[RMDB]
RNA sequence: GGGAACGACUCGAGUAGAGUCGAAAAGGCGCAAGAAACAUCACCGAACCUCCCAUACCAAUUGUUACGACAGCAUCCAGUUUGUCUUUUUGAAGCACAGAGUCAAGUUCGUUUUGUGAGCUCUGAACUCGUACUCCUGAUUCGUCAGGAGUACGAGAAAAGAAACAACAACAACAAC
Reactivity to 2A3 in 0.01 (KOAc 150mM, MgCl2 10mM, bicine 150mM(pH8.5), 24C), signal-to-noise 1, nucleotides 027 to 126: g000g000c040g000c040a060a070g110a240a100a010c050a060u050c030a010c000c030g030a060a080c000c010u040c020c020c000a020u100a090c050c000a080a170u080u100g160u140u140a050c070g000a010c040a050g000c010a030u080c000c000a040g090u020u080u080g040u040c000u000u110u000u040u140g070a050a030g060c050a010c010a120g020a020g040u000c050a050a000g020u120u110c060g030u050u050u180u110g120u040g010a000g000c010u000c000u040g010a010a020
Reactivity to DMS in 0.01 (KOAc 150mM, MgCl2 10mM, bicine 150mM(pH8.5), 24C), signal-to-noise 2, nucleotides 027 to 126: g080g010c030g030c070a110a010g020a120a090a070c100a050u010c030a100c040c040g000a090a150c080c040u010c010c020c030a220u010a070c180c060a060a040u000u020g000u000u000a050c080g040a060c030a030g010c070a070u000c080c070a060g000u000u000u000g020u000c010u000u000u010u020u000g010a050a060g010c050a070c020a100g000a010g010u010c020a080a060g030u000u000c080g010u000u000u010u040g000u010g010a090g000c100u000c030u000g020a070a180